[RMDB]
RNA sequence: GGGAACGACUCGAGUAGAGUCGAAAACUCGCGCGAACAUCGAGGCGUGGAGCGCGACAUGAAUCAGCCUCAAUUAGAUUAAUGGUCGACAGAUCAGCGGCGAUCAGCGACCCAAUUAGAAGCCGCGACCGGAAGAGGAGACGCUCGACGGACGUCAGCGACUGCUAAAUUUCGAUUUAGCAGUCGCAAAAGAAACAACAACAACAAC
Reactivity to 2A3 in 0.01 (KOAc 150mM, MgCl2 10mM, bicine 150mM(pH8.5), 24C), signal-to-noise 1, nucleotides 027 to 156: c020u000c000g000c000g000c000g160a300a000c000a000u040c020g000a010g000g020c000g000u020g000g020a000g000c030g000c060g000a020c030a140u300g020a070a130u090c060a060g000c000c020u040c000a010a130u010u030a020g100a060u000u180a050a190u100g010g000u000c020g000a080c110a130g020a050u070c020a020g010c050g000g000c000g020a000u020c040a010g030c030g000a040c020c020c020a040a090u260u120a060g120a110a000g000c020c020g020c000g020a040c060c000g000g010a110a020g020a030g040g010a160g010a020c010g060c100u060c000g040a020c000g010g000a000c050g010u050c100a020